RNA sequence: GGGAACGACUCGAGUAGAGUCGAAAACGCUGGGAUGCAUGUCUAGACAUGAGAAUACUGAAGCGCGCACGGUAUCUCUCAACAGCUAGACCGCUGCAUCCUGUGCUGAAGCGCGCACGGCAACCGAAAGGUGCGAAAAGACGUAGUUCGCUACGUCGACCUAACAAAUGUUCGCAUUUGUUAGGUCAAAAGAAACAACAACAACAAC
Reactivity to DMS in 0.01 (KOAc 150mM, MgCl2 10mM, bicine 150mM(pH8.5), 24C), signal-to-noise 2, nucleotides 027 to 156: c070g010c020u020g000g000g030a020u000g000c000a030u010g010u000c000u000a040g020a130c030a250u000g020a030g010a070a050u010a010c010u020g020a030a100g010c010g040c010g040c020a300c010g010g020u000a020u000c150u000c000u000c010a050a080c070a120g010c020u010a020g010a020c000c030g020c020u010g020c020a000u000c040c020u020g030u010g010c000u000g010a070a050g020c030g000c050g030c010a200c030g000g000c030a050a100c050c010g000a070a150a230g000g020u000g000c000g000a070a080a160a140g020a030c020g000u000a010g020u000u000c270g010c000u010a000c000g030u000c010
Reactivity to 2A3 in 0.01 (KOAc 150mM, MgCl2 10mM, bicine 150mM(pH8.5), 24C), signal-to-noise 8, nucleotides 027 to 156: c040g000c010u020g000g010g010a000u000g010c000a010u220g000u000c000u000a010g030a230c040a180u160g000a000g010a010a000u000a000c000u020g050a290a080g030c030g000c020g000c040a020c020g010g000u010a010u000c160u000c000u000c110a110a300c060a170g020c000u010a000g000a000c000c000g030c000u000g000c000a000u000c000c000u000g000u030g000c020u100g030a100a050g010c020g000c010g010c020a020c020g080g010c050a140a130c030c010g050a110a040a030g050g000u030g020c050g010a040a090a030a040g010a000c010g000u000a000g020u040u140c200g000c130u000a000c000g000u000c030
Record summary:
The record gives the reactivity of an RNA of 207 nucleotides to DMS and 2A3. For DMS the reverse transcriptase was MarathonRT. Values cover nucleotides 27 to 156. For 2A3 the reverse transcriptase was SuperScript II with manganese. Source: RMDB library RNAMAK, as collected in RNAgym. For DMS, 5,007 sequencing reads were counted.